[RMDB]
RNA sequence: GGGAACGACUCGAGUAGAGUCGAAAAGCAGAGGGCGGCAGUCCUGGGUUCUCUUAUCUUUUCUCUGAUAAAGAGGAGACCGCUGGACUCGCCGCCCCAGCCCGGGUAAGCCACAGUUCCGACCGAAUACCAUGUACCUUCGGGUACAUGAAAAGAAACAACAACAACAAC
Reactivity to 2A3 in 0.01 (KOAc 150mM, MgCl2 10mM, bicine 150mM(pH8.5), 24C), signal-to-noise 9, nucleotides 027 to 129: g080c080a030g120a290g040g000g000c010g000g000c000a000g000u000c000c000u030g010g000g020u250u050c000u000c000u020u080a130u040c010u030u040u100u040c200u030c120u210g080a170u140a180a030a010g010a010g010g010a010g010a010c000c050g120c210u020g000g000a000c000u010c010g000c000c000g010c000c000c000c000a000g000c000c000c000g000g010g010u030a020a010g020c010c010a050c010a050g020u050u000c020c020g060a070c030c010g050a060a020u080a170c050
Reactivity to DMS in 0.01 (KOAc 150mM, MgCl2 10mM, bicine 150mM(pH8.5), 24C), signal-to-noise 9, nucleotides 027 to 129: g050c040a080g020a150g030g010g030c000g020g000c000a010g010u010c050c000u020g010g010g010u050u030c000u020c020u020u040a160u030c000u020u030u020u030c100u050c170u090g010a080u060a030a020a020g030a050g030g010a030g000a020c020c030g040c060u000g010g000a020c000u020c180g030c000c000g010c000c010c000c030a010g020c000c050c000g000g000g030u000a010a060g020c030c020a080c080a080g030u020u020c020c000g030a130c090c060g030a120a060u020a100c200
Source: RMDB library 15KLIB, as collected in RNAgym. This 170-nucleotide RNA was probed chemically with 2A3 and DMS. For 2A3 the reverse transcriptase was SuperScript II with manganese. 2A3 is a SHAPE reagent: it acylates the 2'-hydroxyl of flexible nucleotides of all four kinds. The 2A3 profile rests on 55,023 reads. For DMS, 68,704 sequencing reads were counted.